The record gives the reactivity of an RNA of 207 nucleotides to DMS and 2A3. 2A3 adducts were read by reverse transcription with SuperScript II with manganese. Values cover nucleotides 27 to 156.

[RMDB]
RNA sequence: GGGAACGACUCGAGUAGAGUCGAAAAAGAACCUUCGGGUUCUCGUUACCGUAGGGUGUAACAGCCUGAUGACCAUACAAAUACGGUGUUCGAAAGAGCACCGUUCUUGUAUGCAAGGGCUGCCCACCCUAAACGGCCAUUUCAACUUCGGUUGAAAAGUUAUGCACUCAUUCGUGAGUGCAUAACUAAAAGAAACAACAACAACAAC
Reactivity to DMS in 0.01 (KOAc 150mM, MgCl2 10mM, bicine 150mM(pH8.5), 24C), signal-to-noise 1, nucleotides 027 to 156: a020g000a000a000c010c000u010u020c300g100g030g010u010u000c000u000c030g010u000u000a050c000c010g030u000a030g020g010g040u000g060u010a000a050c000a040g000c020c000u010g000a140u000g020a110c300c000a020u000a010c000a010a020a050u000a080c000g010g000u000g040u000u000c010g030a240a180a260g000a020g030c000a010c010c010g000u000u000c020u000u010g000u020a010u000g000c030a060a180g000g010g020c030u010g020c040c060c020a040c000c000c020u000a000a020a060c020g000g020c060c050a120u000u010u000c010a030a030c010u000u000c270g020g030u000u000g000a010a070a090
Reactivity to 2A3 in 0.01 (KOAc 150mM, MgCl2 10mM, bicine 150mM(pH8.5), 24C), signal-to-noise 4, nucleotides 027 to 156: a010g010a000a000c010c010u070u080c280g050g000g000u020u000c020u020c030g150u100u180a060c010c010g010u030a020g000g000g000u000g040u090a140a060c010a000g020c000c010u070g040a220u140g020a060c040c010a000u000a010c010a000a040a010u060a050c000g000g000u020g020u010u010c020g040a180a090a070g000a030g000c000a000c000c010g000u000u010c000u010u000g000u020a010u000g010c030a070a240g000g000g000c000u000g000c010c020c000a000c000c000c010u020a070a140a000c010g020g010c040c020a070u040u070u040c020a010a020c010u040u060c150g140g000u010u010g000a030a050a010